Chemical mapping of a 177-nucleotide RNA with 2A3 and DMS. 2A3 adducts were read by reverse transcription with SuperScript II with manganese.
RNA sequence: GGGAACGACUCGAGUAGAGUCGAAAAAUUUAUUUGUGGGGAUACUCGAAUGGAGCUAUGUUUUCCUGCUUGUCUGGAUUAACAUUCGGGAGAGAUAAAUUUGCUGGAAUUUGUAGCAUGAUGGGAGCAAAUGUACCCCAUUCGUGGGGUACAUUUGAAAAGAAACAACAACAACAAC
Reactivity to 2A3 in 0.01 (KOAc 150mM, MgCl2 10mM, bicine 150mM(pH8.5), 24C), signal-to-noise 1, nucleotides 027 to 126: a030u050u030u010a060u000u060u060g050u140g000g000g000g010a010u030a100c000u000c000g020a030a010u090g000g030a080g080c050u080a010u070g060u000u090u050u000c000c030u000g070c020u070u140g070u120c050u040g040g070a060u060u100a050a060c030a030u010u020c040g040g000g050a040g010a020g000a040u050a060a080a060u090u110u060g000c000u010g030g030a100a070u110u180u050g020u020a020g020c020a060u110g040a050u070g010g050g000a050g000
Reactivity to DMS in 0.01 (KOAc 150mM, MgCl2 10mM, bicine 150mM(pH8.5), 24C), signal-to-noise 2, nucleotides 027 to 126: a050u000u010u010a010u010u000u000g020u010g010g000g010g010a130u010a060c020u000c010g020a070a060u010g010g000a120g010c100u010a030u000g010u000u000u000u000c000c000u000g010c030u000u010g020u000c030u000g000g000a080u010u010a070a080c050a060u000u000c040g010g010g010a060g000a070g000a070u000a050a050a070u000u000u010g010c050u000g000g000a050a060u020u030u000g010u000a050g010c030a050u000g000a120u000g010g010g000a100g010
The 2A3 profile rests on 717 reads.
For DMS the reverse transcriptase was MarathonRT.